An RNA of 207 nucleotides, treated with 2A3 and read out base by base. The reactions ran in a buffer of 150 mM KOAc, 10 mM MgCl2 and 150 mM bicine (pH 8.5), at 24 C. Source: RMDB library OK3TST, as collected in RNAgym. The 2A3 profile rests on 479 reads.
[RMDB]
RNA sequence: GGGAACGACUCGAGUAGAGUCGAAAAGCAGUCUGUGUUAUAUGCGCCAGACCUUCCAUUGCAUUUACAGUUGAGUAGAUGAUAAAAACGUGAUUUUUUUGAGAAAAAGGGAAAGUGAGAAGAAACGGCGCGAGUCUGGAAGGGAGGGGGGAAAAGAAUAGAUGUAGGUCUUCGGACCUACAUCUAUAAAAGAAACAACAACAACAAC
Reactivity to 2A3 in 0.01 (KOAc 150mM, MgCl2 10mM, bicine 150mM(pH8.5), 24C), signal-to-noise 1, nucleotides 027 to 156: g010c000a030g030u000c020u040g120u000g160u170u090a230u070a070u180g010c000g010c000c020a010g000a070c010c000u000u050c000c000a060u030u180g000c000a000u000u000u100a010c020a080g110u220u160g160a010g010u060a020g000a010u030g000a020u130a060a110a110a000a080c050g110u080g090a090u010u010u000u000u000u070u070g080a130g060a000a110a010a070a050g100g010g040a110a150a000g070u060g040a070g020a000a000g010a010a170a000c030g020g000c010g000c000g020a010g000u000c070u040g020g060a060a000g040g060g010a080g060g030g070g020g010g030a050a060a000a000g030a040